[RMDB]
RNA sequence: GGGAACGACUCGAGUAGAGUCGAAAAGAUAUGGAGAAGAGCUGAUGACCGUACCGCCCACAUCGGAAACGAUGUGUAACAAGUACGCAAGGCUCCUCCUAAGUCAAAACGUGGGUUCGCCCACGAACUUUAAUUGGUUCUUCGGAACCAAUUAAAGAAAAGAAACAACAACAACAAC
Reactivity to DMS in 0.01 (KOAc 150mM, MgCl2 10mM, bicine 150mM(pH8.5), 24C), signal-to-noise 6, nucleotides 027 to 126: g010a050u010a300u000g020g000a030g010a180a090g020a020g010c000u010g030a150u000g000a120c300c010g000u000a000c010c030g000c300c110c010a000c010a000u000c000g020g010a090a100a200c010g010a000u000g010u010g000u010a060a100c120a160a080g000u010a000c010g000c040a100a170g000g010c000u000c010c010u000c000c000u010a020a120g000u010c050a070a060a070a130c040g030u000g000g000g010u000u010c220g020c010c010c010a000c010g010a020a050
Reactivity to 2A3 in 0.01 (KOAc 150mM, MgCl2 10mM, bicine 150mM(pH8.5), 24C), signal-to-noise 4, nucleotides 027 to 126: g040a030u090a040u150g010g030a050g040a300a120g000a040g000c000u040g020a300u190g040a210c060c080g000u010a010c000c030g020c020c010c000a000c000a000u000c010g000g030a050a030a040c000g000a000u000g010u000g010u050a040a040c040a090a080g000u010a010c010g000c040a080a200g000g010c000u000c000c010u000c000c000u030a160a030g040u020c040a010a010a110a170c020g000u020g000g000g040u080u090c260g150c030c000c000a000c010g010a010a000